[RMDB]
RNA sequence: GGGAACGACUCGAGUAGAGUCGAAAAUACGAGUGGUGGUAUACUGUAAUACUUGGUAUACAAAGAGUCGACUCCACCCUGGAUUAACUUUUCCUUAUGUAUAUUCAGGACUAAAUCAACGACUGACGGGGAGAGAAAUUUUCGAAUUUCUCUCCCCAAAAGAAACAACAACAACAAC
Reactivity to 2A3 in 0.01 (KOAc 150mM, MgCl2 10mM, bicine 150mM(pH8.5), 24C), signal-to-noise 3, nucleotides 027 to 126: u190a090c070g010a040g030u040g040g040u030g080g030u030a000u000a010c000u030g120u220a010a150u120a240c080u100u190g030g000u000a010u010a010c000a000a100a000g080a020g000u010c010g020a020c010u010c000c020a030c000c000c000u000g040g000a010u010u080a060a090c040u100u050u010u050c020c040u160u180a120u210g050u010a100u000a010u050u000c000a000g000g040a000c060u170a000a010a060u090c030a050a130c010g000a000c000u010g040a080c160
Reactivity to DMS in 0.01 (KOAc 150mM, MgCl2 10mM, bicine 150mM(pH8.5), 24C), signal-to-noise 2, nucleotides 027 to 126: u030a090c270g000a060g010u030g000g030u000g010g020u000a000u000a010c030u010g000u080a110a110u060a090c230u060u010g000g000u000a090u000a010c030a070a080a040g030a040g000u000c000g000a300c060u000c020c000a040c150c020c000u000g000g020a000u010u010a180a040c110u030u010u020u010c010c010u000u010a120u060g000u000a100u020a010u030u000c030a030g000g000a300c260u030a050a010a080u040c110a000a030c000g000a030c010u010g000a150c160